[RMDB]
RNA sequence: GGGAACGACUCGAGUAGAGUCGAAAACAAAGAAAGUACUGCUCUUGAAGCAGUGGCGGCCAGACAACCGUUGAGAUAGAUCCACAGAUGAACAACCUUUCUGUUGCUUGUCUACUAAUUCUAUCUCGUAGUUGAAGUUCUUCGGAACUUCAACUACAAAAGAAACAACAACAACAAC
Reactivity to DMS in 0.01 (KOAc 150mM, MgCl2 10mM, bicine 150mM(pH8.5), 24C), signal-to-noise 1, nucleotides 027 to 126: c050a190a210a200g000a050a070a060g000u010a080c020u020g000c010u000c040u000u040g020a070a000g000c000a000g010u000g020g030c000g000g030c030c010a100g000a080c140a180a030c040c120g000u000u020g030a020g010a030u020a000g020a020u000c210c280a190c090a000g010a020u000g000a000a000c000a010a020c000c220u000u000u010c260u010g000u000u000g000c000u000u000g000u010c000u020a080c070u000a100a090u000u000c000u020a000u000c020u000c000
Reactivity to 2A3 in 0.01 (KOAc 150mM, MgCl2 10mM, bicine 150mM(pH8.5), 24C), signal-to-noise 1, nucleotides 027 to 126: c020a010a120a040g140a100a130a000g060u050a010c000u000g000c010u020c040u160u300g110a180a000g020c020a010g000u010g030g030c000g020g020c000c020a040g040a140c010a010a020c010c010g130u070u150g000a000g010a000u000a010g010a010u050c040c020a040c050a080g010a010u020g020a000a000c010a010a010c010c000u120u300u130c100u260g010u020u010g010c000u000u000g020u000c000u000a020c010u010a030a060u000u020c000u000a000u000c000u000c040